[RMDB]
RNA sequence: GGGAACGACUCGAGUAGAGUCGAAAACACCCACAUUCCAAUGGCGGGUUUGGUACGAAUGUAUAAUUUGUUAGCAUGCCUUUGGCUUUUACGCAAGUUUUAUCAGCAUGUAAUCAAUGGUUGCAAAGUUGUAGGUUACGUUCGCGUAACCUACAACAAAAGAAACAACAACAACAAC
Reactivity to DMS in 0.01 (KOAc 150mM, MgCl2 10mM, bicine 150mM(pH8.5), 24C), signal-to-noise 1, nucleotides 027 to 126: c190a210c000c000c010a160c130a010u000u000c030c180a060a020u000g000g010c080g040g000g010u000u000u000g010g020u010a030c080g000a020a000u010g020u000a050u010a110a040u000u000u000g030u010u070a130g030c030a060u000g000c020c040u000u000u000g000g000c250u000u000u000u010a070c230g020c120a030a070g010u010u000u010u010a110u030c040a140g010c040a030u000g000u010a060a100u000c010a050a040u010g000g020u010u000g000c040a060a120a070
About this RNA:
Structure probing data (DMS) for a 177-nucleotide construct. The reactions ran in a buffer of 150 mM KOAc, 10 mM MgCl2 and 150 mM bicine (pH 8.5), at 24 C. Reactivities are given for positions 27 through 126. For DMS the reverse transcriptase was MarathonRT.